[RMDB]
RNA sequence: GGGAACGACUCGAGUAGAGUCGAAAAGAUAUGGAUAGAUAAGUUGUCGCCAUGGCUAGCGAUGGCUCGGAAACGAGCUCAGAAAUCGCUUGGACCCAUGGACCCGACAACUUAUCUAUCCUAAGUCGGUUUUCUAAUGGUUCGCCAUUAGAAAACCAAAAGAAACAACAACAACAAC
Reactivity to DMS in 0.01 (KOAc 150mM, MgCl2 10mM, bicine 150mM(pH8.5), 24C), signal-to-noise 1, nucleotides 027 to 126: g020a100u000a300u000g000g020a010u010a000g000a000u000a000a010g000u000u010g000u000c000g000c040c000a010u020g020g030c020u010a020g020c000g030a020u000g020g020c020u040c010g000g010a130a130a210c000g000a010g030c000u000c300a130g000a100a140a070u010c000g010c020u010u020g050g000a150c300c020c000a010u000g020g010a130c300c300c130g010a010c000a010a010c000u000u000a000u000c000u000a020u000c000c000u000a000a090g000u000c170
An RNA of 177 nucleotides, treated with DMS and read out base by base. It was measured as part of the RMDB library TTRINS. The DMS profile rests on 773 reads. The RNA was probed in 150 mM KOAc, 10 mM MgCl2 and 150 mM bicine (pH 8.5) at 24 C.